[RMDB]
RNA sequence: GGGAACGACUCGAGUAGAGUCGAAAAGAGCUCAAUAGGGACGAGCUCAAAGGCCAUGAACCAGAAUAAGAAAGACAGCCCAGUGCGCAUCCCUAACGCGGAGUACUGCGAAGAGUCAAGCGCGCAGGCAUAGUAUAUGAUUCGUCAUAUACUAUGCAAAAGAAACAACAACAACAAC
Reactivity to DMS in 0.01 (KOAc 150mM, MgCl2 10mM, bicine 150mM(pH8.5), 24C), signal-to-noise 9, nucleotides 027 to 126: g000a030g010c010u000c010a140a120u020a120g020g020g020a110c300g000a010g000c000u000c010a040a080a090g000g010c030c020a070u010g010a070a110c050c030a100g000a100a080u020a100a100g010a080a080a090g000a080c090a060g010c030c030c030a070g020u010g010c020g010c030a120u000c010c010c010u010a100a230c060g000c020g000g010a180g020u030a070c020u000g000c040g000a060a080g010a080g000u010c040a090a120g000c040g010c020g010c030a070g010
Reactivity to 2A3 in 0.01 (KOAc 150mM, MgCl2 10mM, bicine 150mM(pH8.5), 24C), signal-to-noise 9, nucleotides 027 to 126: g010a000g000c000u000c010a070a150u150a200g060g010g060a030c060g000a020g000c000u000c000a020a030a010g030g000c030c020a100u110g040a040a050c020c010a020g050a080a120u200a190a030g150a190a090a000g080a040c030a030g020c000c000c020a020g010u040g020c020g000c020a070u080c010c010c010u050a080a050c020g000c030g020g030a080g100u120a120c020u030g010c020g040a070a030g050a030g110u060c040a030a020g020c010g000c000g000c020a020g080
The record gives the reactivity of an RNA of 177 nucleotides to DMS and 2A3. DMS adducts were read by reverse transcription with MarathonRT. For DMS, 38,318 sequencing reads were counted. It was measured as part of the RMDB library OK1LIB.